Chemical mapping of a 207-nucleotide RNA with 2A3. Conditions: 150 mM KOAc, 10 mM MgCl2 and 150 mM bicine (pH 8.5), 24 C. 2A3 adducts were read by reverse transcription with SuperScript II with manganese. The data come from the RNA Mapping Database (RMDB), library M2RFPK.

RNA sequence: GGGAACGACUCGAGUAGAGUCGAAAAUUCAACCCCAAAAAUCUAGUGCAAAUAUUGUCUUAAUUACUUAGGCUAAAAGAAAUCAGUAUUAAAGCGGGACAAGGCAUCGACAUUUGAUACAAAUAUUUUUAGCAUAUUAGAUUCGUCUAAUAUGCAACUAGGGUAAUGUGUUCGCACAUUACCCUAGAAAAGAAACAACAACAACAAC
Reactivity to 2A3 in 0.01 (KOAc 150mM, MgCl2 10mM, bicine 150mM(pH8.5), 24C), signal-to-noise 1, nucleotides 027 to 156: u140u050c050a050a050c030c040c000c010a100a120a040a040a040u070c100u070a010g060u020g080c000a080a060a060u120a240u160u030g010u010c030u060u200a220a220u130u030a200c010u050u060a030g070g000c000u110a020a120a000a040g070a000a110a000u140c060a070g020u070a110u060u180a050a060a020g070c050g020g060g000a000c000a060a000g040g040c010a000u040c080g060a080c020a070u040u040u070g050a050u070a160c040a000a230a000u080a110u040u250u050u110u110a010g000c000a000u000a010u000u000a020g020a000u000u000c050g040u000c050u000a010a010u020a000u000g000c000a000a000